RNA sequence: GGGAACGACUCGAGUAGAGUCGAAAACCUCAGGCUUCCUGGGACACUAACAGAGCAACUGCGCCCGGGGAGAGUGCGCCGAGCUCCCUAAAGGGCUGCAGCGCAUGGCGGGGCCUGGGAGCAGCUACCCAAAAGUAACUUUCGAGUUACUUUUGGGAAAAGAAACAACAACAACAAC
Reactivity to DMS in 0.01 (KOAc 150mM, MgCl2 10mM, bicine 150mM(pH8.5), 24C), signal-to-noise 4, nucleotides 027 to 126: c020c000u000c130a090g010g010c010u000u010c020c000u000g020g020g010a060c060a130c040u000a080a160c060a050g010a130g030c090a160a170c020u000g020c020g010c010c000c020g000g000g010g020a020g010a070g010u020g000c010g000c000c030g000a100g000c000u000c000c000c010u020a080a110a150g020g000g010c000u020g040c050a020g020c230g020c030a100u010g000g040c240g010g000g000g020c000c010u000g000g000g000a050g000c050a070g000c080u020a120
Reactivity to 2A3 in 0.01 (KOAc 150mM, MgCl2 10mM, bicine 150mM(pH8.5), 24C), signal-to-noise 9, nucleotides 027 to 126: c000c000u050c050a040g070g000c010u110u050c040c010u030g010g020g050a050c050a040c190u130a190a020c030a040g120a030g110c020a080a170c020u010g000c000g000c000c010c000g000g000g010g000a020g000a000g030u110g020c040g010c020c030g040a040g020c010u030c000c010c010u170a220a190a060g020g010g010c100u160g010c020a000g000c000g000c020a040u050g060g010c080g010g000g020g020c000c000u000g000g000g000a010g000c070a000g010c010u070a100
An RNA of 177 nucleotides, treated with DMS and 2A3 and read out base by base.
For DMS the reverse transcriptase was MarathonRT.
As a SHAPE reagent, 2A3 marks flexible, mostly unpaired nucleotides at the ribose 2'-OH.
Reactivities are given for positions 27 through 126.
The RNA was probed in 150 mM KOAc, 10 mM MgCl2 and 150 mM bicine (pH 8.5) at 24 C.